[RMDB]
RNA sequence: GGGAACGACUCGAGUAGAGUCGAAAAUUUUCAUAGCAGUCAAACCAAUGUUUAAAAACAGAAUAAUUUGGUUUUCAUAUUCAAUUGUAAGCACAUUGAAAGGGCCAUGGAACAUUUGCAGUGGCCUUUAGUGUAUCAGAACAUAGUUUAGAUCUGCGAUAUACUUAGCUUUCGAGCUAAGUAUAUCAAAAGAAACAACAACAACAAC
Reactivity to DMS in 0.01 (KOAc 150mM, MgCl2 10mM, bicine 150mM(pH8.5), 24C), signal-to-noise 2, nucleotides 027 to 156: u010u010u010u000c040a130u000a220g050c020a060g000u000c000a060a030a030c020c030a040a100u010g000u000u010u020a080a040a120a090a300c030a140g040a070a110u000a080a130u000u000u000g040g020u000u010u000u000c080a100u000a080u000u000c040a050a160u010u000g000u020a130a250g000c060a040c020a120u000u000g000a080a010a050g000g010g030c000c000a020u010g030g050a100a090c110a150u000u000u000g050c070a190g020u010g010g020c020c000u000u000u000a030g020u000g000u000a100u000c060a210g010a000a030c010a010u000a050g010u010u000u000a120g000a070u000c030u000g040c180
Reactivity to 2A3 in 0.01 (KOAc 150mM, MgCl2 10mM, bicine 150mM(pH8.5), 24C), signal-to-noise 3, nucleotides 027 to 156: u010u010u030u070c040a040u120a070g020c000a000g020u030c030a000a000a020c000c010a120a050u010g000u010u130u110a120a120a040a020a030c040a050g090a130a080u080a080a140u080u130u060g010g020u040u060u100u120c020a010u060a100u130u070c080a080a110u080u050g000u060a090a110g040c010a030c020a050u030u120g170a100a100a030g010g000g000c000c000a040u060g060g060a100a080c000a200u300u260u220g040c050a090g020u020g000g000c000c000u000u010u030a010g000u000g000u000a070u130c040a050g030a080a010c010a020u070a040g010u030u050u050a050g020a060u070c010u060g000c010
The record gives the reactivity of an RNA of 207 nucleotides to DMS and 2A3. The 2A3 profile rests on 1,582 reads. The RNA was probed in 150 mM KOAc, 10 mM MgCl2 and 150 mM bicine (pH 8.5) at 24 C. Reactivities are given for positions 27 through 156. DMS adducts were read by reverse transcription with MarathonRT.